Description: The data come from the RNA Mapping Database (RMDB), library OK2TRN. This 177-nucleotide RNA was probed chemically with DMS. Values cover nucleotides 27 to 126. For DMS, 2,833 sequencing reads were counted.

RNA sequence: GGGAACGACUCGAGUAGAGUCGAAAAUGUUGAGGGUGUGCUCCACGCUAGGCACGACCCGGUGGCCGUCGGCGAACAGAUGAUAUACGUUGUGGAGGUUGGCGCGGCUCUCUACACGUUCAGUGUGUGCUCGAAGAAAUUUCGAUUUCUUCGAGCAAAAAGAAACAACAACAACAAC
Reactivity to DMS in 0.01 (KOAc 150mM, MgCl2 10mM, bicine 150mM(pH8.5), 24C), signal-to-noise 2, nucleotides 027 to 126: u010g010u010u000g010a160g010g020g020u010g010u000g010c020u010c070c050a110c130g020c060u010a090g080g010c040a030c020g010a090c010c010c000g010g040u020g000g020c030c020g000u000c070g010g010c020g020a060a070c080a090g000a080u010g020a120u000a100u010a080c050g000u000u010g000u000g000g000a030g020g020u000u010g000g020c060g020c040g000g000c030u000c030u010c020u010a020c030a030c020g010u000u000c120a070g020u000g010u010g020